[RMDB]
RNA sequence: GGGAACGACUCGAGUAGAGUCGAAAACAUUGCUACAUACCGAUCCAACAAGAUAAUUGAACAUGGUUGUGUAGGAUAAUAUAUGCAAAUAUACUUGUUGCGGUCAUAAACGAACAUUGCAUGCGUGUAUAGGUCGGAGUUUCGACUCCGACCUAUAAAAAGAAACAACAACAACAAC
Reactivity to DMS in 0.01 (KOAc 150mM, MgCl2 10mM, bicine 150mM(pH8.5), 24C), signal-to-noise 2, nucleotides 027 to 126: c040a000u070u010g070c020u000a000c080a080u010a160c080c050g010a100u000c000c010a000a000c040a000a080g020a110u080a150a050u030u040g000a110a090c180a130u010g000g020u010u000g000u000g000u020a070g000g000a060u000a070a120u010a040u000a000u020g000c050a000a020a080u070a110u000a090c020u040u000g000u000u010g000c130g000g000u010c030a090u060a040a170a130c000g010a050a050c190a100u000u040g080c090a030u030g000c060g000u000g000
Reactivity to 2A3 in 0.01 (KOAc 150mM, MgCl2 10mM, bicine 150mM(pH8.5), 24C), signal-to-noise 1, nucleotides 027 to 126: c020a090u000u090g190c070u130a020c000a110u000a040c000c300g000a000u020c000c000a020a020c000a000a010g120a070u100a100a020u270u100g130a230a020c080a020u170g180g000u000u080g020u020g100u040a080g070g000a050u040a170a070u070a000u000a000u000g060c000a000a150a000u050a170u050a040c000u000u000g000u040u110g180c070g000g000u120c000a040u020a130a130a040c160g000a040a000c030a050u000u080g000c010a000u050g000c100g080u010g020
Source: RMDB library OK1LIB, as collected in RNAgym.
Structure probing data (DMS and 2A3) for a 177-nucleotide construct.
The RNA was probed in 150 mM KOAc, 10 mM MgCl2 and 150 mM bicine (pH 8.5) at 24 C.
For 2A3, 492 sequencing reads were counted.
DMS adducts were read by reverse transcription with MarathonRT.